[RMDB]
RNA sequence: GGGAACGACUCGAGUAGAGUCGAAAAGGCGUGCAGCACGGCCAUGCGUGCCGAGCAGCCGGUGCCGGUUGGCGAGCGGUCGAGCUUGGCCGGGCGGAUGGCGACGGUGUUCACGCCCGUCAGCACACGUCACUACGAGGUUCGCCUCGUAGUGACGAAAAGAAACAACAACAACAAC
Reactivity to DMS in 0.01 (KOAc 150mM, MgCl2 10mM, bicine 150mM(pH8.5), 24C), signal-to-noise 2, nucleotides 027 to 126: g000g000c000g010u000g020c130a040g010c000a010c000g000g030c010c010a040u000g000c010g010u000g030c010c000g000a060g020c020a210g000c000c010g010g000u000g020c000c000g030g040u020u010g010g010c000g010a130g010c030g020g000u000c190g000a120g010c010u000u000g010g010c030c300g000g000g000c040g000g010a030u010g010g010c000g000a070c040g000g000u010g010u010u000c030a030c030g030c010c000c000g000u000c070a080g010c100a100c210a200
Reactivity to 2A3 in 0.01 (KOAc 150mM, MgCl2 10mM, bicine 150mM(pH8.5), 24C), signal-to-noise 2, nucleotides 027 to 126: g020g010c020g000u040g040c130a010g000c010a030c000g040g000c000c010a010u110g090c020g090u190g090c000c000g000a010g030c010a000g000c000c010g020g000u030g000c010c000g280g180u200u300g030g000c030g020a050g060c030g000g040u170c050g070a050g010c010u070u060g110g010c010c060g020g130g050c020g000g050a030u020g050g000c240g180a090c040g260g020u020g040u010u010c030a000c010g010c000c000c000g050u100c030a100g090c070a020c000a000
The record gives the reactivity of an RNA of 177 nucleotides to DMS and 2A3. The RNA was probed in 150 mM KOAc, 10 mM MgCl2 and 150 mM bicine (pH 8.5) at 24 C. Values cover nucleotides 27 to 126. The data come from the RNA Mapping Database (RMDB), library OK2TST. For 2A3, 2,021 sequencing reads were counted.